[RMDB]
Chemical mapping of a 177-nucleotide RNA with DMS and 2A3. Conditions: 150 mM KOAc, 10 mM MgCl2 and 150 mM bicine (pH 8.5), 24 C. Source: RMDB library OK2TST, as collected in RNAgym. For DMS the reverse transcriptase was MarathonRT. Values cover nucleotides 27 to 126. For 2A3 the reverse transcriptase was SuperScript II with manganese.
RNA sequence: GGGAACGACUCGAGUAGAGUCGAAAAAAUUACCUUGACAACUUUGCCAGUUAGCCAUGAGCAUGAGAGUCUUUUUCUGGACUCAGCUCUCUUUCAGUAACCUACAGGCUGUCUGUGUGCCAACUGACACAGAAGGAAUCUUCGGAUUCCUUCUGUGAAAAGAAACAACAACAACAAC
Reactivity to DMS in 0.01 (KOAc 150mM, MgCl2 10mM, bicine 150mM(pH8.5), 24C), signal-to-noise 2, nucleotides 027 to 126: a130a100u000u000a080c020c010u000u010g010a070c100a030a080c070u000u010u020g010c050c040a040g000u000u000a050g000c020c030a090u010g030a040g020c030a130u020g020a120g010a020g010u000c000u000u010u010u020u020c250u020g020g010a020c020u000c020a190g000c020u000c030u000c050u000u010u000c060a030g030u020a080a120c090c070u020a070c130a120g000g010c020u000g000u010c010u000g010u010g030u010g000c010c020a060a070c060u000g000a300
Reactivity to 2A3 in 0.01 (KOAc 150mM, MgCl2 10mM, bicine 150mM(pH8.5), 24C), signal-to-noise 2, nucleotides 027 to 126: a000a000u180u050a150c020c000u030u110g070a010c020a060a060c060u200u120u110g040c030c000a020g030u070u060a030g000c020c030a060u050g010a000g070c040a120u160g100a040g000a030g280u030c000u000u100u030u090u110c140u170g010g000a000c010u000c020a000g030c000u000c000u000c000u010u040u020c000a000g010u020a060a100c010c010u070a070c100a030g140g000c000u030g020u010c010u000g110u000g030u090g050c040c000a000a050c000u030g060a020